[RMDB]
RNA sequence: GGGAACGACUCGAGUAGAGUCGAAAACAUUAAAAGAAAAAGAGUUGAAUAUAGGAAGAACUUUUGGGAAGUUACCGUAUCGUGUCAGAAAUGUCCAAACACUCGCAGAAGCCCUGCUAGCAGAUGGCGAUGAAUCUCUCUUCGGAGAGAUUCAUCGAAAAGAAACAACAACAACAAC
Reactivity to DMS in 0.01 (KOAc 150mM, MgCl2 10mM, bicine 150mM(pH8.5), 24C), signal-to-noise 2, nucleotides 027 to 126: c070a040u020u070a010a120a110a100g020a050a050a070a050a030g010a060g020u000u010g000a030a020u040a060u000a130g020g020a070a070g010a070a060c020u010u000u000u070g020g000g010a070a100g000u030u010a030c070c020g010u030a080u000c060g000u000g000u000c070a030g000a060a120a050u020g030u020c040c030a090a040a110c160a020c030u000c080g010c070a000g010a100a150g030c020c020c000u010g000c030u000a040g000c010a020g000a140u020g020g000
Reactivity to 2A3 in 0.01 (KOAc 150mM, MgCl2 10mM, bicine 150mM(pH8.5), 24C), signal-to-noise 2, nucleotides 027 to 126: c020a010u150u220a040a050a060a100g140a090a150a000a040a040g020a000g000u040u050g030a180a020u060a010u100a210g130g000a010a100g050a060a050c010u010u070u180u130g010g030g000a100a000g000u040u070a050c090c000g020u010a050u100c020g020u020g060u010c000a000g060a090a120a010u060g040u040c020c000a000a000a150c040a060c000u020c010g000c010a020g000a090a000g020c000c000c000u000g010c010u020a000g020c040a000g040a180u090g050g000